[RMDB]
Structure probing data (2A3 and DMS) for a 207-nucleotide construct. The data come from the RNA Mapping Database (RMDB), library OK3TST. Conditions: 150 mM KOAc, 10 mM MgCl2 and 150 mM bicine (pH 8.5), 24 C. For DMS, 3,563 sequencing reads were counted.
RNA sequence: GGGAACGACUCGAGUAGAGUCGAAAAAUUGAAGUUUGGCAGGUUUACACGACGGCUUCGAUCGUAACCUGACAUUGUUUUGCCUUCGAUUACGUCAGUAAGAAUAGUCUCAAACGAACCACUAUCAACCGCUUGCUGCACUUCGUACUCAACGCGAAGAAUAGGACAGGUUCGCCUGUCCUAUUCUAAAAGAAACAACAACAACAAC
Reactivity to 2A3 in 0.01 (KOAc 150mM, MgCl2 10mM, bicine 150mM(pH8.5), 24C), signal-to-noise 5, nucleotides 027 to 156: a000u090u090g030a030a000g060u060u070u020g040g010c020a010g010g040u030u080u140a060c080a020c060g030a000c020g090g080c120u240u210c100g120a280u030c020g030u010a010a020c000c000u010g040a040c020a010u050u100g100u080u130u100u110g040c000c010u040u030c020g030a030u060u060a060c040g010u040c090a030g020u070a060a020g040a100a050u040a060g070u040c040u020c100a180a180a070c120g020a020a020c040c010a030c090u030a050u070c080a060a090c030c060g040c070u040u040g000c000u010g010c020a040c060u040u020c040g030u020a060c020u000c070a090a020c070g010c040g060a060
Reactivity to DMS in 0.01 (KOAc 150mM, MgCl2 10mM, bicine 150mM(pH8.5), 24C), signal-to-noise 2, nucleotides 027 to 156: a100u000u000g000a070a140g000u000u010u000g040g000c020a070g030g020u010u000u000a060c130a080c010g000a150c040g010g000c090u000u010c050g030a180u000c030g030u000a040a070c030c020u000g020a020c040a040u000u010g010u000u000u000u020g010c050c040u010u000c050g020a200u010u000a040c020g000u010c080a150g010u000a060a060g020a080a130u000a050g000u000c040u000c050a060a050a090c060g010a100a100c060c050a080c070u010a120u000c090a070a140c050c070g000c030u000u010g030c060u000g000c090a060c020u000u010c020g010u000a070c030u010c060a080a030c080g030c040g020a090